Structure probing data (DMS and 2A3) for a 177-nucleotide construct.
The reactions ran in a buffer of 150 mM KOAc, 10 mM MgCl2 and 150 mM bicine (pH 8.5), at 24 C.
For DMS, 9,794 sequencing reads were counted.
For 2A3, 6,326 sequencing reads were counted.
It was measured as part of the RMDB library OK2TRN.
[RMDB]
RNA sequence: GGGAACGACUCGAGUAGAGUCGAAAAAUCAGUGAGUGUAUAUCAUGGCGAGCAGUACCUAGGCGAUCCAUGAGUACAUCUCAUGCGCGGUACAGAUGGAUCAUCUAGUGUCAUGAUGAUCAUAUGCCUUAGCGAGAGUAUUCGUACUCUCGCUAAGAAAAGAAACAACAACAACAAC
Reactivity to DMS in 0.01 (KOAc 150mM, MgCl2 10mM, bicine 150mM(pH8.5), 24C), signal-to-noise 7, nucleotides 027 to 126: a090u000c070a190g020u010g000a040g010u000g020u000a030u000a110u010c000a030u000g000g000c040g010a300g020c060a090g010u010a100c240c130u010a110g020g010c010g000a200u000c020c010a010u000g010a100g000u000a010c020a030u010c020u000c030a030u000g000c160g010c120g010g010u000a050c080a080g000a070u000g010g000a010u000c010a010u000c000u000a170g020u020g010u000c150a060u000g000a010u000g000a020u000c020a060u000a070u000g010c130
Reactivity to 2A3 in 0.01 (KOAc 150mM, MgCl2 10mM, bicine 150mM(pH8.5), 24C), signal-to-noise 4, nucleotides 027 to 126: a000u150c060a020g030u020g050a020g000u020g030u030a010u020a050u080c000a010u010g000g010c030g030a020g000c030a030g110u170a150c050c060u110a110g110g060c000g000a010u000c000c000a000u000g020a010g010u010a010c000a040u070c020u010c020a020u070g020c110g020c050g050g040u110a070c030a080g130a100u140g080g030a020u010c000a000u010c010u050a070g090u080g130u250c030a060u100g010a010u010g000a000u030c010a010u030a040u090g080c000